[RMDB]
The record gives the reactivity of an RNA of 177 nucleotides to 2A3.

RNA sequence: GGGAACGACUCGAGUAGAGUCGAAAACGACCACGAUCACGUUGUGAGGCAACCGGUUCUGGCGAUCCUGGCGAAACCGCGCUCCCGGUUUGGCACCCAGCAGACGAUGCAGCGUGACCGCGUGCAGCCCAGUGCGAGCUUUCGAGCUCGCACUGGGAAAAGAAACAACAACAACAAC
Reactivity to 2A3 in 0.01 (KOAc 150mM, MgCl2 10mM, bicine 150mM(pH8.5), 24C), signal-to-noise 1, nucleotides 027 to 126: c050g030a020c020c000a000c070g050a050u000c060a080c110g040u050u080g020u010g110a010g020g030c020a050a080c010c000g030g000u030u050c010u090g000g080c060g010a030u010c000c050u010g030g020c050g040a020a030a090c040c000g000c030g000c030u100c020c000c000g050g000u060u060u030g070g000c020a080c010c020c000a050g000c010a000g090a020c050g040a060u130g000c000a000g000c010g030u010g020a000c000c060g050c020g020u020g040c040a020g010
Record summary: The 2A3 profile rests on 754 reads. It was measured as part of the RMDB library OK1LIB. 2A3 adducts were read by reverse transcription with SuperScript II with manganese. Conditions: 150 mM KOAc, 10 mM MgCl2 and 150 mM bicine (pH 8.5), 24 C.